[RMDB]
The record gives the reactivity of an RNA of 177 nucleotides to DMS and 2A3. Reactivities are given for positions 27 through 126. For 2A3 the reverse transcriptase was SuperScript II with manganese.

RNA sequence: GGGAACGACUCGAGUAGAGUCGAAAACCAUCUCUCAGCUGUGCGGGUGCCAAAAAGGAGGAAAUACAUACCGGUACGGCUCACGGUGCGGCAGUGUGGAGACCUGUUGUAAAGCGCGGCGCCCAUCAAUAAAUCUUGUAUUCGUACAAGAUUUAUUAAAAGAAACAACAACAACAAC
Reactivity to DMS in 0.01 (KOAc 150mM, MgCl2 10mM, bicine 150mM(pH8.5), 24C), signal-to-noise 9, nucleotides 027 to 126: c020c010a170u030c060u010c040u010c060a100g010c040u010g010u010g020c060g010g000g020u010g000c040c040a030a080a070a110a090g020g000a100g010g010a130a090a090u020a080c130a100u020a150c040c010g000g010u010a070c080g010g000c030u010c050a050c050g010g030u000g010c030g000g010c040a040g020u010g010u000g000g000a130g010a060c080c040u000g000u000u000g010u010a060a070a090g000c050g010c060g000g010c030g010c010c010c010a060u020c100
Reactivity to 2A3 in 0.01 (KOAc 150mM, MgCl2 10mM, bicine 150mM(pH8.5), 24C), signal-to-noise 9, nucleotides 027 to 126: c000c000a060u030c030u010c010u020c040a030g010c020u050g020u060g090c060g050g020g010u040g020c010c020a060a080a060a030a030g120g020a060g020g090a040a130a010u230a040c090a040u160a090c010c010g050g010u050a040c040g040g000c010u020c020a040c020g080g000u080g010c020g020g000c030a050g020u060g020u060g090g030a050g010a050c000c010u050g030u080u030g060u100a090a090a050g040c050g010c010g050g000c010g010c000c000c000a030u060c020

High 2A3 reactivity points to a flexible backbone, as in loops and unpaired stretches.